Source: RMDB library RNAMAK, as collected in RNAgym. Structure probing data (DMS and 2A3) for a 207-nucleotide construct. Reactivities are given for positions 27 through 156.
[RMDB]
RNA sequence: GGGAACGACUCGAGUAGAGUCGAAAAGGGGUCAUCUUUUGACGAACCAUCUCGAGCGAGGAUCAUACACUGAAGCCUCCACGGUGUAUGGGAGCUCGAUCUGGUUCGAUAAGAUGACGGAGGCACCCAAAGGUUAGCCUCUUCGGAGGCUAACCAACUCUCUAAUGAAGUUCGCUUCAUUAGAGAGAAAAGAAACAACAACAACAAC
Reactivity to DMS in 0.01 (KOAc 150mM, MgCl2 10mM, bicine 150mM(pH8.5), 24C), signal-to-noise 1, nucleotides 027 to 156: g000g010g010g000u010c010a010u010c010u000u000u000u020g030a220c160g000a000a020c020c010a010u000c040u000c020g000a050g030c000g030a130g010g010a070u010c000a010u000a020c030a020c000u000g000a000a100g000c020c000u000c000c000a300c030g040g020u020g020u000a030u000g020g030g010a040g030c020u010c000g000a010u010c000u010g040g020u000u000c030g010a080u010a020a070g000a030u000g000a040c000g010g000a050g140g050c010a060c010c000c000a100a090a120g040g000u000u000a020g000c010c010u000c000u000u010c300g040g010a020g030g020c000u000a000a000c000c010a010a040
Reactivity to 2A3 in 0.01 (KOAc 150mM, MgCl2 10mM, bicine 150mM(pH8.5), 24C), signal-to-noise 3, nucleotides 027 to 156: g020g010g120g030u010c000a010u010c020u030u110u120u250g250a190c090g000a000a000c000c000a010u000c010u000c060g000a010g000c000g010a210g060g000a010u000c000a010u000a000c010a000c010u050g040a060a020g010c000c000u020c000c010a010c010g010g020u000g000u000a000u000g000g010g000a000g010c000u000c000g000a000u020c020u010g000g010u000u000c000g000a010u020a010a000g010a000u000g000a000c010g000g000a000g000g000c000a030c000c000c010a100a090a000g010g000u010u010a000g000c000c010u020c020u060u080c230g070g000a000g010g000c000u000a000a000c000c000a000a000